[RMDB]
Description: The data come from the RNA Mapping Database (RMDB), library OK1LIB. Structure probing data (2A3) for a 177-nucleotide construct.
RNA sequence: GGGAACGACUCGAGUAGAGUCGAAAAGCACGUAGGUUCAGAUGAUGGGCCCGCAUCGGUACGAAAGUAAGACGAAAGUCAAGCCUACGUGCAUGAGCACGCGGGCCCCGUGCUCUACUGCAAAAGACAUGCCUGCUCCUUUCGAGGAGCAGGCAUGAAAAGAAACAACAACAACAAC
Reactivity to 2A3 in 0.01 (KOAc 150mM, MgCl2 10mM, bicine 150mM(pH8.5), 24C), signal-to-noise 1, nucleotides 027 to 126: g000c000a010c000g000u000a000g000g030u080u120c070a020g000a130u140g000a000u070g050g000g050c000c000c000g000c000a060u030c010g110g070u240a050c000g090a140a020a020g070u070a050a000g020a010c040g020a070a040a000g000u000c000a000a000g020c020c000u000a000c000g000u000g000c000a000u000g000a000g000c000a000c010g000c030g000g000g010c000c000c000c000g000u000g000c000u000c000u010a090c080u090g090c020a030a000a090a120g080a070

The RNA was probed in 150 mM KOAc, 10 mM MgCl2 and 150 mM bicine (pH 8.5) at 24 C.